[RMDB]
RNA sequence: GGGAACGACUCGAGUAGAGUCGAAAAGCUGCGCAAAGACACCAUGGAUUACCGCCAGCGCCCGACUCCCACCAGCAACACUGAAACCUAUCAGUUUGAAAACGAAGCGGGCAGUAGCAGCCGGGUGCAUAGCCGUGAAAUUCGUUUCACGGCUAUGAAAAGAAACAACAACAACAAC
Reactivity to 2A3 in 0.01 (KOAc 150mM, MgCl2 10mM, bicine 150mM(pH8.5), 24C), signal-to-noise 2, nucleotides 027 to 126: g030c000u030g010c030g050c100a090a040a100g070a100c030a020c120c010a070u190g000g030a070u100u110a130c030c010g000c000c010a020g000c070g000c000c010c010g150a150c020u010c020c000c030a060c000c000a020g090c000a020a020c010a000c060u050g030a210a040a090c010c000u080a100u140c010a000g020u030u050u110g070a060a060a000a030c060g000a080a000g060c040g000g030g000c010a030g050u070a030g010c020a010g040c040c010g030g000g000u070g000
Reactivity to DMS in 0.01 (KOAc 150mM, MgCl2 10mM, bicine 150mM(pH8.5), 24C), signal-to-noise 3, nucleotides 027 to 126: g030c020u010g020c120g040c050a160a110a150g000a150c020a050c040c040a080u000g000g000a120u000u010a080c120c070g000c010c020a040g000c050g010c000c000c010g020a120c060u000c010c010c050a080c140c090a150g010c020a030a060c180a020c010u000g010a020a070a130c220c200u000a090u000c020a010g000u000u000u010g000a070a040a090a090c210g020a080a070g010c040g000g010g000c040a070g000u010a070g030c070a040g000c020c020g000g000g000u000g010
Description
The record gives the reactivity of an RNA of 177 nucleotides to 2A3 and DMS. The data come from the RNA Mapping Database (RMDB), library OK2TST. As a SHAPE reagent, 2A3 marks flexible, mostly unpaired nucleotides at the ribose 2'-OH. 2A3 adducts were read by reverse transcription with SuperScript II with manganese. The RNA was probed in 150 mM KOAc, 10 mM MgCl2 and 150 mM bicine (pH 8.5) at 24 C. In probing experiments dimethyl sulfate is read out at A N1 and C N3, which are open when not base-paired.